Chemical mapping of a 207-nucleotide RNA with 2A3.
It was measured as part of the RMDB library M2RFPK.
RNA sequence: GGGAACGACUCGAGUAGAGUCGAAAAAGCGAUGAUACGUCAUCGCAACGAUUGCCUGAUCGUAAAACAGGAGACGGCCGUGGCCGCGACCACGUAAAAAAGCGUAACGUGGUCUACGGUCCACGAAAAAAGCGCGGAACGUUCGCGUUCCGCGCAACUACUUGCCUAGGUUCGCCUAGGCAAGUAGAAAAGAAACAACAACAACAAC
Reactivity to 2A3 in 0.01 (KOAc 150mM, MgCl2 10mM, bicine 150mM(pH8.5), 24C), signal-to-noise 2, nucleotides 027 to 156: a000g000c010g000a000u020g000a010u050a100c210g070u010c000a000u000c000g000c000a010a000c000g010a010u030u050g010c000c010u010g020a030u020c010g150u220a000a020a000a020c010a020g000g030a030g140a050c230g090g040c090c040g010u010g010g000c000c000g000c010g000a000c000c030a010c020g000u040a010a070a030a080a080a030g090c050g070u070a070a000c000g000u010g010g010u010c020u030a060c010g000g030u040c010c030a000c000g010a110a000a000a000a000a000g030c000g020c000g050g000a000a010c000g030u130u170c230g010c000g130u000u020c000c000g080c000g000c000a000a000
The reactions ran in a buffer of 150 mM KOAc, 10 mM MgCl2 and 150 mM bicine (pH 8.5), at 24 C.